[RMDB]
RNA sequence: GGGAACGACUCGAGUAGAGUCGAAAAAUCUCAGGUAUCAGUCCUUAGGAUCGAUCCACCAUUAGUUGAUUGACUAUUCUGAAAGAGUGUCCUUGACAGGCCUGAGGCUAGUAGGUUAGGCUGGCGGGCCAGCAAAGCCCACGUAUCUGCCUGACUAGGUAAAUUAGUCAUUCGUGACUAAUUUACCAAAAGAAACAACAACAACAAC
Reactivity to 2A3 in 0.01 (KOAc 150mM, MgCl2 10mM, bicine 150mM(pH8.5), 24C), signal-to-noise 4, nucleotides 027 to 156: a010u030c000u020c010a000g010g010u080a130u290c050a090g020u040c050c050u070u110a020g000g040a060u050c050g030a050u010c070c040a020c050c040a200u120u120a070g030u020u070g080a200u070u110g020a050c010u060a110u250u050c060u090g160a160a160a080g060a040g060u150g030u020c020c000u000u080g000a000c000a020g020g010c000c010u010g000a010g010g010c000u010a050g110u060a050g090g000u020u010a000g000g000c020u010g010g040c010g020g000g000c010c030a040g030c060a100a050a000g000c010c000c000a050c030g060u110a150u140c040u040g000c000c000u000g000a000c000u020a030
Reactivity to DMS in 0.01 (KOAc 150mM, MgCl2 10mM, bicine 150mM(pH8.5), 24C), signal-to-noise 2, nucleotides 027 to 156: a070u010c000u010c010a010g010g020u000a090u010c070a130g000u000c010c260u000u000a050g020g030a030u000c040g010a260u010c010c030a030c050c050a090u010u000a060g030u010u010g030a210u000u020g030a050c050u000a050u000u030c050u010g000a040a080a120g010a170g040u000g000u000c000c030u000u000g010a060c030a180g030g000c000c010u020g030a060g040g000c100u000a070g010u000a070g000g010u000u000a060g020g020c030u010g020g040c060g030g020g010c000c020a140g020c250a110a070a150g040c010c000c010a020c030g010u010a110u000c060u010g000c000c010u000g000a050c010u000a090
Chemical mapping of a 207-nucleotide RNA with 2A3 and DMS.